[RMDB]
RNA sequence: GGGAACGACUCGAGUAGAGUCGAAAACGGGGCAACUCUUCUCAGAAUCCAGCGAGAGGCGUGGAGAGAGGGCCGCGGUGCUCUGGAGUAGAGGCUCUGCCUUCGAAACACCAUCGAUCGUCCCUUCUUCUUUACCUUCUUCUGGCUCUUCCGAUGAUCAAUUAGAAUACUUCGGUAUUCUAAUUGAAAAAGAAACAACAACAACAAC
Reactivity to DMS in 0.01 (KOAc 150mM, MgCl2 10mM, bicine 150mM(pH8.5), 24C), signal-to-noise 2, nucleotides 027 to 156: c060g010g010g020g040c080a060a080c040u010c020u000u000c040u000c000a080g020a120a070u000c000c020a070g000c110g020a070g000a060g000g000c070g020u000g010g010a060g020a100g040a070g020g030g020c100c020g040c010g000g060u010g000c050u010c020u000g000g040a290g000u000a170g010a080g000g030c010u010c110u000g020c060c000u010u000c030g000a300a190a230c010a060c000c010a060u010c000g010a100u000c040g020u000c010c010c020u000u000c060u010u010c010u010u000u000a080c030c020u000u000c020u000u000c020u000g010g000c030u000c040u000u000c020c040g000a090u000g010a230
Reactivity to 2A3 in 0.01 (KOAc 150mM, MgCl2 10mM, bicine 150mM(pH8.5), 24C), signal-to-noise 6, nucleotides 027 to 156: c070g000g000g020g020c040a080a080c060u020c010u170u050c030u020c020a030g050a060a070u300c010c000a080g000c100g050a010g000a000g020g020c130g040u010g000g000a010g000a000g000a000g010g010g000c010c000g040c000g000g000u000g000c010u000c010u020g000g010a000g000u010a010g000a000g020g010c030u070c200u300g040c030c010u230u180c000g010a010a010a010c000a010c150c000a000u000c000g040a300u030c000g000u000c000c000c000u070u050c030u090u020c010u010u030u020a000c000c000u000u020c000u010u000c000u000g000g000c010u000c000u020u010c010c010g070a060u120g040a050